[RMDB]
RNA sequence: GGGAACGACUCGAGUAGAGUCGAAAAACAGCGAAAGGCACAAGACUUCGAACAUUAUAGCAGUUAGUAGUUGCCUAAACCCAUUGCAAUAUAUGGGACAGUAGAGGUCGAAAGCCUAUACUGUGCGAAAAGUCGCAAGGUUUCGACCUUGCGACAAUAACUCUAUAUUGUUCGCAAUAUAGAGUUAAAAAGAAACAACAACAACAAC
Reactivity to 2A3 in 0.01 (KOAc 150mM, MgCl2 10mM, bicine 150mM(pH8.5), 24C), signal-to-noise 5, nucleotides 027 to 156: a000c030a000g010c020g080a150a100a030g020g000c010a020c030a070a080g050a030c020u040u030c070g070a090a060c060a130u180u240a140u220a140g060c060a030g020u030u100a020g020u100a030g010u100u060g000c000c000u030a080a060a050c000c000c000a000u000u010g000c000a020a000u020a000u010a000u160g010g000g000a000c010a000g000u010a010g000a010g010g020u080c070g050a080a050a000g010c000c000u000a000u020a000c000u000g010u030g010c010g050a010a050a050a100g000u000c000g010c000a000a010g030g010u010u090u170c190g050a040c000c000u000u010g000c000g000a000c000a000a000
Reactivity to DMS in 0.01 (KOAc 150mM, MgCl2 10mM, bicine 150mM(pH8.5), 24C), signal-to-noise 4, nucleotides 027 to 156: a040c060a100g010c020g010a080a070a070g020g030c010a110c080a100a210g000a060c030u010u000c030g000a110a080c050a110u000u010a110u010a100g020c070a080g010u000u000a110g010u000a110g030u000u000g000c010c020u010a040a070a190c010c000c000a030u000u000g000c070a180a200u000a080u000a020u000g020g000g010a080c020a030g010u000a050g000a030g080g040u000c000g000a160a110a150g010c010c000u000a060u000a020c010u000g010u000g010c040g020a070a080a080a160g000u000c000g000c000a060a010g020g000u000u000u000c270g020a060c020c020u000u000g030c000g010a010c000a020a040